[RMDB]
RNA sequence: GGGAACGACUCGAGUAGAGUCGAAAACAUCUUUCCUCCCUACACAGUGACUCCAGCUUGGGAGGGGCAGGGCUAGGCUGAGCCAGCACUCCCUGUGGUGUCUGCCUGCCACGUGCGGCUCUGGAGUAAAACCUGGAGAAGUUCGCUUCUCCAGGAAGAGUACUAAAACCUUCGGGUUUUAGUACUCAAAAGAAACAACAACAACAAC
Reactivity to DMS in 0.01 (KOAc 150mM, MgCl2 10mM, bicine 150mM(pH8.5), 24C), signal-to-noise 1, nucleotides 027 to 156: c060a130u020c050u000u000u000c020c010u000c000c000c030u000a180c110a060c220a110g020u010g020a130c010u000c020c000a120g030c060u010u000g020g030g000a070g000g020g060g050c060a010g010g030g040c030u000a040g060g030c050u000g000a300g010c000c010a110g020c030a060c040u000c050c030c030u000g000u010g040g000u000g020u010c040u000g020c030c030u000g010c020c020a090c050g070u010g020c030g000g020c030u000c050u000g000g000a080g020u000a070a020a060a190c030c000u010g010g020a020g010a040a020g010u000u000c300g020c010u000u000c010u010c000c010a000g000g000a010a030
Reactivity to 2A3 in 0.01 (KOAc 150mM, MgCl2 10mM, bicine 150mM(pH8.5), 24C), signal-to-noise 4, nucleotides 027 to 156: c020a080u080c070u120u170u110c010c010u040c000c000c010u130a080c180a030c030a130g110u050g070a020c010u010c010c000a010g020c020u070u060g020g000g000a000g000g000g010g000c000a000g000g000g040c050u300a020g000g040c000u050g040a020g170c050c010a020g040c020a010c030u090c030c050c020u030g020u020g000g000u010g110u040c040u060g000c010c010u020g010c000c020a160c130g150u170g020c030g020g000c040u020c020u080g000g000a000g010u030a010a040a010a060c010c000u000g000g000a010g000a000a010g020u070u120c120g030c120u000u000c000u000c000c000a000g000g000a000a000
Chemical mapping of a 207-nucleotide RNA with DMS and 2A3. The 2A3 profile rests on 2,155 reads. It was measured as part of the RMDB library M2RFOK. For 2A3 the reverse transcriptase was SuperScript II with manganese.